[RMDB]
RNA sequence: GGGAACGACUCGAGUAGAGUCGAAAAGGGGUCUCGUAAGACAGCGAUACUACAAAGCAACAGCUAUACUGAAGCCUCCACGGUAUAGACAUGCUUUGAGUAUCGCAAUGACGCGAGACGGAGGCACCCAAAACCAUACACGUUCGCGUGUAUGGAACUAACAACCUGAGUUCGCUCAGGUUGUUAGAAAAGAAACAACAACAACAAC
Reactivity to DMS in 0.01 (KOAc 150mM, MgCl2 10mM, bicine 150mM(pH8.5), 24C), signal-to-noise 2, nucleotides 027 to 156: g000g010g030g000u000c000u020c010g060u000a020a280g020a270c070a090g050c030g010a050u000a030c020u000a130c010a040a010a020g020c000a090a120c110a150g010c000u000a000u000a020c000u000g010a010a120g000c010c000u000c000c030a300c030g010g020u010a000u000a010g010a040c040a300u010g030c000u030u000u010g030a040g030u000a020u000c010g050c040a000a050u000g010a090c110g000c010g010a040g020a050c000g000g060a060g120g080c000a220c000c030c000a040a020a120a250c020c000a030u000a010c010a010c020g010u000u000c300g030c000g060u000g010u000a010u010g000g010a020a070
Reactivity to 2A3 in 0.01 (KOAc 150mM, MgCl2 10mM, bicine 150mM(pH8.5), 24C), signal-to-noise 4, nucleotides 027 to 156: g010g010g060g000u000c000u010c000g000u030a140a170g130a170c080a050g060c010g010a000u010a000c010u100a210c010a010a000a000g000c030a090a090c070a130g000c000u000a000u000a010c000u040g050a200a010g000c000c000u010c010c000a010c000g000g000u010a000u010a010g070a030c040a180u300g000c010u000u000u000g000a010g000u000a000u000c000g000c000a000a010u020g000a000c010g000c010g010a000g000a000c000g000g000a010g000g010c010a050c010c000c000a000a080a010a080c000c000a000u000a000c000a000c010g050u070u090c300g010c000g160u000g010u000a000u000g000g000a010a020
An RNA of 207 nucleotides, treated with DMS and 2A3 and read out base by base. The reactions ran in a buffer of 150 mM KOAc, 10 mM MgCl2 and 150 mM bicine (pH 8.5), at 24 C. The 2A3 profile rests on 4,412 reads. 2A3 adducts were read by reverse transcription with SuperScript II with manganese.